[RMDB]
RNA sequence: GGGAACGACUCGAGUAGAGUCGAAAACGGUGGUUUGGAGCAAAACAUCGCGCGCCUUUCAGUCCCACAAACCGUGGUGGUUUCACUUGGGCGUUCUUCAACUGGGCGGAUAGUUCGCGGUCAUCACCUUGGGAUGUUGGUUCGCCAACAUCCCAAGAAAAGAAACAACAACAACAAC
Reactivity to DMS in 0.01 (KOAc 150mM, MgCl2 10mM, bicine 150mM(pH8.5), 24C), signal-to-noise 1, nucleotides 027 to 126: c110g030g000u000g010g010u000u000u000g000g020a180g000c110a040a060a040a070c120a070u000c060g020c030g010c060g000c040c000u020u000u010c110a120g010u000c000c030c010a170c140a050a130a030c080c070g030u000g000g040u000g020g030u030u000u000c080a040c050u010u000g010g010g030c020g010u000u000c010u000u020c070a070a100c080u000g010g000g020c040g000g000a070u000a060g010u000u030c100g010c070g000g000u010c070a020u010c060a050c120